[RMDB]
The record gives the reactivity of an RNA of 177 nucleotides to DMS and 2A3. The 2A3 profile rests on 4,904 reads. The RNA was probed in 150 mM KOAc, 10 mM MgCl2 and 150 mM bicine (pH 8.5) at 24 C. For DMS the reverse transcriptase was MarathonRT.
RNA sequence: GGGAACGACUCGAGUAGAGUCGAAAAGAGUAGUAGUUCGCUACUACUCAAAGGCACAAAAGGCACAGUUGUAAAGUGCAUGGAACACGCCAAGUGCCCGUGAAAGUAAAUCCUUCGGGAUUUACAACUUCACUACAUGUUUCGACAUGUAGUGAAGAAAAGAAACAACAACAACAAC
Reactivity to DMS in 0.01 (KOAc 150mM, MgCl2 10mM, bicine 150mM(pH8.5), 24C), signal-to-noise 4, nucleotides 027 to 126: g000a000g000u000a000g000u000a000g010u000u010c240g030c010u000a010c000u000a010c000u000c000a020a060a070g000g020c010a070c030a100a060a170a130g000g000c010a020c010a070g010u010u000g010u010a090a100a070g030u000g000c010a050u000g000g020a100a120c100a060c070g000c030c020a080a170g020u000g000c010c000c040g000u000g010a100a090a150g000u000a000a010a000u000c000c000u000u020c190g030g010g010a010u000u000u000a000c000a080a100
Reactivity to 2A3 in 0.01 (KOAc 150mM, MgCl2 10mM, bicine 150mM(pH8.5), 24C), signal-to-noise 4, nucleotides 027 to 126: g000a000g010u010a000g000u010a000g000u020u030c170g000c110u010a000c000u000a010c000u010c000a010a020a000g010g000c030a040c020a090a180a040a050g040g020c010a000c020a080g100u190u120g200u300a140a090a030g010u020g020c010a010u050g060g010a110a050c020a030c040g020c000c000a060a040g040u030g020c010c000c000g010u060g080a170a030a000g000u000a000a020a010u010c000c010u020u070c230g070g000g000a000u000u000u010a000c000a010a010